Source information: An RNA of 177 nucleotides, treated with DMS and 2A3 and read out base by base. For DMS, 3,471 sequencing reads were counted. It was measured as part of the RMDB library OK1LIB.

RNA sequence: GGGAACGACUCGAGUAGAGUCGAAAAACAGGGCAAUCCCGGGGAAGGUUAUGUGCGUAUUGCUUUGGUUGCCGAUGUCGCAACUUGUGUCAAAGCUGCGGAAACCAUUGUUUCCCUAUAUCGGUAACAUGGUCCAGGAUUUCGAUCCUGGACCAUGAAAAGAAACAACAACAACAAC
Reactivity to DMS in 0.01 (KOAc 150mM, MgCl2 10mM, bicine 150mM(pH8.5), 24C), signal-to-noise 2, nucleotides 027 to 126: a110c120a060g020g000g030c070a060a060u000c010c010c020g000g000g000g000a100a080g000g000u000u030a080u050g040u010g030c040g070u000a060u070u030g000c000u000u000u000g000g010u000u000g000c010c000g000a030u000g020u030c040g030c000a010a080c030u000u020g010u040g030u030c130a070a050a050g000c050u000g000c020g020g000a020a040a060c040c080a120u030u030g000u020u000u000c000c000c010u000a010u050a000u000c110g040g000u050a060a240
Reactivity to 2A3 in 0.01 (KOAc 150mM, MgCl2 10mM, bicine 150mM(pH8.5), 24C), signal-to-noise 3, nucleotides 027 to 126: a020c010a000g030g050g000c010a050a020u030c040c010c020g040g010g010g040a130a060g120g020u170u140a060u130g160u070g140c000g000u110a060u020u230g020c000u080u020u010g000g020u000u020g000c030c000g070a050u040g070u120c020g020c000a000a000c000u080u120g080u070g180u200c070a110a060a000g010c030u010g010c010g000g080a110a060a020c000c020a070u050u150g080u100u030u030c000c000c000u070a070u010a010u250c030g040g020u010a030a050
The reactions ran in a buffer of 150 mM KOAc, 10 mM MgCl2 and 150 mM bicine (pH 8.5), at 24 C.